The record gives the reactivity of an RNA of 177 nucleotides to DMS and 2A3. Conditions: 150 mM KOAc, 10 mM MgCl2 and 150 mM bicine (pH 8.5), 24 C. The data come from the RNA Mapping Database (RMDB), library OK2TRN. Reactivities are given for positions 27 through 126.
RNA sequence: GGGAACGACUCGAGUAGAGUCGAAAAAGGUCAUGAAAUGUGGGCACAGAGCGAGUGACUUGCAGUCAUGGAAUUGUGAGUGGCACGACUGGGCUUUGAACCCAGGCCUGCCUGGUGCCAGAGCCUGCGAAAGGAUAUCUUUCGAGAUAUCCUUUCGAAAAGAAACAACAACAACAAC
Reactivity to DMS in 0.01 (KOAc 150mM, MgCl2 10mM, bicine 150mM(pH8.5), 24C), signal-to-noise 9, nucleotides 027 to 126: a060g010g010u000c030a060u000g000a060a080a090u010g020u000g000g000g010c030a050c040a080g010a120g010c080g010a120g020u000g000a060c020u000u000g010c060a050g000u000c020a120u010g010g000a070a050u000u000g010u000g000a070g010u000g010g010c020a040c110g000a080c050u000g000g000g010c010u000u010u010g010a080a300c100c000c000a020g010g000c060c090u000g010c020c010u000g010g010u000g010c180c020a080g010a100g010c020c020u000g010
Reactivity to 2A3 in 0.01 (KOAc 150mM, MgCl2 10mM, bicine 150mM(pH8.5), 24C), signal-to-noise 5, nucleotides 027 to 126: a000g070g010u100c050a040u100g070a100a120a060u150g020u090g020g020g030c020a010c010a040g130a030g080c050g040a050g060u040g060a070c010u010u040g000c020a010g010u020c020a110u210g110g100a220a060u090u050g030u020g060a040g030u050g020g050c020a000c040g060a040c070u060g010g020g000c010u090u060u140g040a040a040c000c000c010a010g000g010c000c000u010g010c000c000u030g040g000u030g000c020c000a000g020a010g040c020c040u080g030